[RMDB]
RNA sequence: GGGAACGACUCGAGUAGAGUCGAAAAGGCCGAGAGUUCGCUCUCGGCCAAACAAUAAAAGAGCGAACCCAACCCAAACAACGCUCAAAGAAGGGAGGGAAAAAAGCAUAAUCUUCGGAUUAUGCAAGUAUCUUCUAAGCUUCGGCUUAGAAGAUACAAAAGAAACAACAACAACAAC
Reactivity to DMS in 0.01 (KOAc 150mM, MgCl2 10mM, bicine 150mM(pH8.5), 24C), signal-to-noise 1, nucleotides 027 to 126: g000g050c000c000g000a010g090a040g070u000u000c280g000c000u000c010u000c040g010g090c000c000a000a050a030c050a080a010u000a040a090a060a180g000a010g040c020g000a080a050c070c070c030a040a130c060c060c030a130a060a080c170a110a220c030g010c050u000c040a030a150a140g000a080a100g000g000g000a130g000g000g000a000a030a050a040a090a050g000c000a000u000a070a010u000c000u000u120c260g000g000a000u000u000a000u000g000c000a010a050
Chemical mapping of a 177-nucleotide RNA with DMS. The reactions ran in a buffer of 150 mM KOAc, 10 mM MgCl2 and 150 mM bicine (pH 8.5), at 24 C.